The record gives the reactivity of an RNA of 177 nucleotides to DMS and 2A3. The 2A3 profile rests on 1,201 reads. DMS adducts were read by reverse transcription with MarathonRT. The data come from the RNA Mapping Database (RMDB), library OK1LIB. The RNA was probed in 150 mM KOAc, 10 mM MgCl2 and 150 mM bicine (pH 8.5) at 24 C.
RNA sequence: GGGAACGACUCGAGUAGAGUCGAAAAGAAAGAGAGCUCCAAAACACGCGUCAGUGUGUGAUCAGGAGGUGAGACGUUCAUGUAAAUUUGACAUUGCACCUUUUGUGCUAGAAAGUCAAGAAGGAGCCGUUAAACCCACGUUCGCGUGGGUUUAACGAAAAGAAACAACAACAACAAC
Reactivity to DMS in 0.01 (KOAc 150mM, MgCl2 10mM, bicine 150mM(pH8.5), 24C), signal-to-noise 2, nucleotides 027 to 126: g000a080a100a170g000a150g030a140g020c020u010c000c000a070a030a290a060c000a030c000g000c020g000u050c280a100g000u000g010u000g010u010g000a140u020c060a070g000g000a020g000g060u000g000a060g020a100c030g000u000u000c020a020u040g020u030a100a170a210u050u020u000g000a000c000a130u040u060g000c000a020c000c120u000u000u000u020g000u020g010c080u010a080g000a080a120a070g030u000c140a080a030g010a100a120g010g000a010g010c020
Reactivity to 2A3 in 0.01 (KOAc 150mM, MgCl2 10mM, bicine 150mM(pH8.5), 24C), signal-to-noise 3, nucleotides 027 to 126: g150a000a150a000g170a000g030a020g010c000u000c000c000a090a040a030a000c000a000c000g020c000g090u180c180a200g040u050g000u000g020u030g040a070u020c030a010g060g010a000g000g000u020g000a050g030a040c090g060u090u050c030a010u060g010u190a030a120a200u130u090u070g010a000c030a030u070u110g010c000a000c030c020u080u090u050u150g010u030g000c030u010a020g160a080a150a050g030u080c030a000a050g050a010a040g040g000a000g060c010